[RMDB]
RNA sequence: GGGAACGACUCGAGUAGAGUCGAAAACAUGGACCGCACAAUGAAGAUACGGUGCUUUUGUAUCGUACUUAUUGUUUCUGGUGCGCUGUUAACCGAGGUAAAUAAUAACCGGAGUCUCUCCGGCGACCAUCGUAAUAGUCUUCGGACUAUUACGAUGAAAAGAAACAACAACAACAAC
Reactivity to DMS in 0.01 (KOAc 150mM, MgCl2 10mM, bicine 150mM(pH8.5), 24C), signal-to-noise 4, nucleotides 027 to 126: c020a050u010g010g000a030c020c000g030c300a040c010a010a020u010g010a020a020g000a180u000a000c010g000g030u000g000c000u010u020u000u020g020u000a010u000c000g020u000a000c000u000u010a030u010u000g010u000u010u000c050u010g030g030u000g010c010g020c160u000g000u000u010a090a170c020c020g020a120g020g000u020a040a070a110u010a070a070u000a130a080c000c000g000g000a030g000u010c180u010c020u000c000c000g000g000c070g000a070c220
Reactivity to 2A3 in 0.01 (KOAc 150mM, MgCl2 10mM, bicine 150mM(pH8.5), 24C), signal-to-noise 5, nucleotides 027 to 126: c010a030u050g020g050a010c010c000g070c020a000c000a000a040u210g040a090a020g040a080u000a000c000g000g010u010g010c000u150u180u140u300g010u000a000u010c010g010u000a000c000u020u040a020u020u030g040u030u130u070c100u150g030g000u040g080c060g000c070u030g010u040u070a040a030c000c020g020a070g060g080u170a080a130a150u170a130a100u100a170a060c000c010g040g010a020g090u090c100u010c000u000c180c000g000g000c000g010a030c010